[RMDB]
RNA sequence: GGGAACGACUCGAGUAGAGUCGAAAAGAGCCCCACUCCCUUCUCCCAUCCGGCCCGAGAUUAGGGAGGAUUGACUGUGUCAGGGAUGGCGGGUGGCCUCUCUCGCUGCCAGGGCCCUUGUCAGAGCCAGAGACAAUACGUUCGCGUAUUGUCUCUGAAAAGAAACAACAACAACAAC
Reactivity to DMS in 0.01 (KOAc 150mM, MgCl2 10mM, bicine 150mM(pH8.5), 24C), signal-to-noise 3, nucleotides 027 to 126: g000a180g000c060c000c000c110a190c050u000c000c000c000u000u000c040u000c010c020c040a120u000c060c040g000g000c020c040c070g010a110g000a050u000u010a050g020g010g010a110g000g010a090u000u010g010a030c030u000g000u000g010u000c030a030g010g010g020a090u000g010g010c070g000g010g010u010g010g010c040c070u000c040u000c030u000c070g010c020u000g010c030c020a070g010g020g020c020c030c040u000u000g010u000c050a090g010a130g010c130
Reactivity to 2A3 in 0.01 (KOAc 150mM, MgCl2 10mM, bicine 150mM(pH8.5), 24C), signal-to-noise 2, nucleotides 027 to 126: g020a040g110c000c020c000c070a020c010u030c010c000c000u040u030c020u000c010c000c020a080u040c020c020g140g030c060c020c040g100a080g010a070u100u170a050g030g010g000a010g000g000a020u040u150g040a040c060u080g000u030g050u250c020a030g000g110g040a150u100g040g070c030g000g030g010u040g040g040c010c050u040c000u000c020u000c030g020c030u030g040c000c020a050g000g030g000c020c000c000u120u170g070u090c050a020g000a010g200c020